Conditions: 150 mM KOAc, 10 mM MgCl2 and 150 mM bicine (pH 8.5), 24 C. This 177-nucleotide RNA was probed chemically with 2A3 and DMS. DMS adducts were read by reverse transcription with MarathonRT.

RNA sequence: GGGAACGACUCGAGUAGAGUCGAAAACCUGAUGAUAAGUGCUUUGCUAAUAAGCACCGGUCCUUCACACAAUGGUAUCAUGAGCAUGUUGGUGGUGUCUAUGACAACUCUAUCACAUGCCCAUUGACUUAUCUGGAUGGUUCGCCAUCCAGAUAAGAAAAGAAACAACAACAACAAC
Reactivity to 2A3 in 0.01 (KOAc 150mM, MgCl2 10mM, bicine 150mM(pH8.5), 24C), signal-to-noise 4, nucleotides 027 to 126: c010c000u030g080a090u030g000a020u050a140a010g020u000g000c010u050u050u050g050c090u090a170a070u080a180a090g000c000a000c000c010g010g010u020c010c020u090u130c050a050c000a000c010a100a150u090g070g030u100a050u170c060a050u070g020a000g020c010a010u020g040u070u090g100g020u010g020g000u030g020u010c060u110a220u250g040a020c030a030a030c060u000c000u100a010u010c010a000c000a000u000g010c020c010c000a020u030u080g010a030
Reactivity to DMS in 0.01 (KOAc 150mM, MgCl2 10mM, bicine 150mM(pH8.5), 24C), signal-to-noise 3, nucleotides 027 to 126: c020c010u000g000a100u010g020a060u000a110a080g010u000g010c000u000u000u000g020c170u010a130a080u000a010a010g010c000a000c020c070g010g010u000c060c150u000u000c080a070c180a130c240a090a070u010g030g000u010a150u010c050a030u000g010a030g000c000a020u000g010u000u010g030g010u000g010g000u000g010u010c060u000a160u020g010a080c140a060a030c080u000c010u000a030u010c020a030c000a000u000g000c000c000c010a020u000u000g000a110